[RMDB]
RNA sequence: GGGAACGACUCGAGUAGAGUCGAAAAUGUUCUUGACAAGCCCCUCACUCAUCCUUCUGGACACUGGUUCCCAGAAUGUCCUUUCUGUCCUUUCCCACCAAAGUUUACAGGGAGAGAAAUAUGGUGAGGAGCUUAGACACUCACAGAGCUGCAGUGACCUACUACUAUCGUUCGCGAUAGUAGUAGGAAAAGAAACAACAACAACAAC
Reactivity to 2A3 in 0.01 (KOAc 150mM, MgCl2 10mM, bicine 150mM(pH8.5), 24C), signal-to-noise 3, nucleotides 027 to 156: u100g010u030u030c040u110u090g090a080c040a080a030g010c020c000c000c020u000c000a020c010u160c000a030u050c010c050u120u080c040u070g020g000a020c000a020c070u090g040g050u260u150c050c020c000a000g050a080a110u100g050u040c000c020u000u080u030c050u050g100u070c020c020u000u020u010c040c000c020a020c030c050a180a090a070g030u040u040u080a080c080a080g030g020g000a020g000a000g040a010a120a030u220a040u070g020g000u000g000a000g000g000a000g000c000u000u000a030g000a000c010a000c040u030c050a070c040a070g160a050g090c100u100g000c110a040g030u040g060a060
Reactivity to DMS in 0.01 (KOAc 150mM, MgCl2 10mM, bicine 150mM(pH8.5), 24C), signal-to-noise 1, nucleotides 027 to 156: u000g000u020u010c040u000u000g020a260c040a100a030g000c020c010c010c000u010c010a050c030u020c110a160u010c040c030u000u000c070u020g010g030a050c050a260c120u000g070g000u000u000c030c000c000a140g000a070a070u010g000u000c060c000u000u000u000c060u000g000u000c170c010u020u000u000c000c010c130a180c030c020a030a040a140g040u000u010u000a140c100a160g000g030g000a080g010a120g000a030a040a080u000a080u000g000g010u000g010a040g010g000a030g000c000u000u000a060g010a100c090a020c040u000c090a120c080a160g010a110g030c020u010g010c010a050g000u000g020a250

An RNA of 207 nucleotides, treated with 2A3 and DMS and read out base by base. For 2A3 the reverse transcriptase was SuperScript II with manganese. Source: RMDB library OK3TST, as collected in RNAgym. For 2A3, 1,526 sequencing reads were counted. The RNA was probed in 150 mM KOAc, 10 mM MgCl2 and 150 mM bicine (pH 8.5) at 24 C.